[RMDB]
RNA sequence: GGGAACGACUCGAGUAGAGUCGAAAAUAGACCUGAUUCGUCAGGUCUACCAGCGAGGGAGAGAGCGAGGGUCCCACGCUCCCAGGGUCGCACGCUCCCUAAGACUUCCUGAAUUCGUUCAGGAAAAAUUUAUAGAACCAUUCGUGGUUCUAUAAAUAAAAGAAACAACAACAACAAC
Reactivity to DMS in 0.01 (KOAc 150mM, MgCl2 10mM, bicine 150mM(pH8.5), 24C), signal-to-noise 6, nucleotides 027 to 126: u000a020g000a010c000c000u000g000a020u000u010c170g020u000c000a000g000g000u000c000u000a010c070c060a130g010c130g010a070g000g010g000a040g010a060g010a050g020c020g010a090g000g010g010u000c010c000c010a110c070g010c060u000c010c010c010a160g000g000g010u000c020g010c040a120c040g010c030u000c000c000c000u000a080a090g010a160c140u000u000c000c000u000g010a020a030u000u010c170g020u000u000c000a010g010g000a000a010a040a090
Reactivity to 2A3 in 0.01 (KOAc 150mM, MgCl2 10mM, bicine 150mM(pH8.5), 24C), signal-to-noise 2, nucleotides 027 to 126: u060a000g000a000c000c000u000g000a010u010u050c130g040u020c100a000g000g000u000c000u010a010c020c010a030g080c030g110a040g010g030g000a070g000a020g000a000g040c030g020a090g070g060g070u080c020c020c010a020c040g040c010u030c000c000c000a000g010g020g030u060c020g020c090a020c050g020c000u030c000c000c020u040a080a050g080a120c040u040u010c000c000u000g020a010a020u090u080c180g030u050u010c030a000g000g000a040a020a010a000
Structure probing data (DMS and 2A3) for a 177-nucleotide construct.
Values cover nucleotides 27 to 126.
The reactions ran in a buffer of 150 mM KOAc, 10 mM MgCl2 and 150 mM bicine (pH 8.5), at 24 C.